[RMDB]
RNA sequence: GGGAACGACUCGAGUAGAGUCGAAAAAAGGGACGUCGUGCCCACGCGGUUCCGGAUCCACGCGUGACCCGGCCGGACCGCGACUCCGACAGGCGGCUGUCCGGGCCCCCGAUGCCCUCGGCAGGGCACAAAUUAGGUUCUUCGGAACCUAAUUUGUAAAAGAAACAACAACAACAAC
Reactivity to DMS in 0.01 (KOAc 150mM, MgCl2 10mM, bicine 150mM(pH8.5), 24C), signal-to-noise 4, nucleotides 027 to 126: a090a110g030g010g000a050c090g020u000c070g020u000g000c020c010c050a170c030g010c030g010g000u010u010c010c010g010g000a080u010c040c060a130c150g010c140g010u000g000a110c020c010c020g000g000c300c010g000g000a040c000c010g010c000g000a080c070u000c060c100g000a090c080a090g010g000c100g000g000c030u000g010u000c010c060g010g000g000c020c010c010c020c020g000a110u010g010c010c000c000u000c060g020g010c140a110g010g010g000c020
Reactivity to 2A3 in 0.01 (KOAc 150mM, MgCl2 10mM, bicine 150mM(pH8.5), 24C), signal-to-noise 2, nucleotides 027 to 126: a020a030g050g000g020a050c090g080u080c010g090u140g040c010c030c000a010c000g010c000g000g040u230u140c030c000g010g000a060u080c040c040a060c130g100c030g130u160g160a140c010c000c030g010g020c020c030g010g000a010c000c000g030c000g040a040c050u060c020c050g060a020c030a040g030g100c070g060g050c060u120g020u030c030c070g020g030g000c020c000c010c020c010g000a040u070g000c000c000c000u000c010g070g040c090a020g010g010g010c020